Notes
An RNA of 177 nucleotides, treated with DMS and 2A3 and read out base by base. For 2A3 the reverse transcriptase was SuperScript II with manganese. DMS adducts were read by reverse transcription with MarathonRT. For DMS, 594 sequencing reads were counted. The reactions ran in a buffer of 150 mM KOAc, 10 mM MgCl2 and 150 mM bicine (pH 8.5), at 24 C.

RNA sequence: GGGAACGACUCGAGUAGAGUCGAAAAACGCCGCAACACGCGGGCGGCGUACCGUACAGAGAGAAGAAAAGGGGCAUAUUUCCCUGCUUGCAGCGAUGCGAGCAAAACAAAAAUUUCCAUGAAUACGCGUGAAAAUAUGGUUCGCCAUAUUUUCACGAAAAGAAACAACAACAACAAC
Reactivity to DMS in 0.01 (KOAc 150mM, MgCl2 10mM, bicine 150mM(pH8.5), 24C), signal-to-noise 1, nucleotides 027 to 126: a060c030g040c000c000g000c050a100a080c010a060c200g000c120g020g000g010c000g030g040c000g000u000a030c000c010g000u040a100c110a040g000a070g020a050g010a130a060g010a070a070a140a000g000g010g030g020c270a110u000a090u030u030u010c000c010c040u000g000c000u000u000g000c000a000g000c280g000a160u000g020c030g000a010g000c000a050a030a010a020c190a050a040a060a080a110u030u000u000c030c030a180u000g010a030a080u000a100c130g020
Reactivity to 2A3 in 0.01 (KOAc 150mM, MgCl2 10mM, bicine 150mM(pH8.5), 24C), signal-to-noise 1, nucleotides 027 to 126: a030c010g000c010c000g000c020a020a050c050a060c130g080c250g030g000g000c000g010g000c000g000u010a020c000c020g030u030a020c070a040g100a000g020a000g000a250a020g040a030a070a050a060g040g000g020g000c050a060u070a140u180u060u030c000c020c000u000g000c000u000u010g030c000a010g020c040g060a050u010g000c010g000a010g020c000a000a040a010a000c010a010a080a040a010a060u030u040u050c050c030a070u120g070a120a050u190a120c070g000